[RMDB]
RNA sequence: GGGAACGACUCGAGUAGAGUCGAAAAUACCGCAGGCCUGCGGUGCGGCAGUGUGGAGACCUGCCGUAAGCCGUGUUGUUUUGACAACCGGGAGAAAGCGUAUCCGGAGGCAGCGCUUUCAGGGUCUAAAAGUAUGGGAUCUUCGGAUCCCAUACAAGUAAAUUACCUCCUUCGGGAGGUAAUUUACAAAAGAAACAACAACAACAAC
Reactivity to 2A3 in 0.01 (KOAc 150mM, MgCl2 10mM, bicine 150mM(pH8.5), 24C), signal-to-noise 1, nucleotides 027 to 156: u100a000c000c010g030c000a010g010g030c020c020u030g000c010g000g010u000g000c000g000g000c010a010g010u030g000u060g160g090a060g030a100c000c000u000g000c000c000g030u010a000a010g040c000c030g090u120g010u180u010g010u000u090u100u300g120a010c000a000a000c010c010g000g010g010a000g010a000a000a000g000c020g000u070a110u110c160c140g030g020a010g000g020c010a010g010c000g000c000u000u010u020c000a000g000g000g010u000c000u010a010a080a030a050g010u000a000u000g000g000g000a000u010c000u050u050c160g020g000a000u000c000c000c000a000u000a000c000a000a000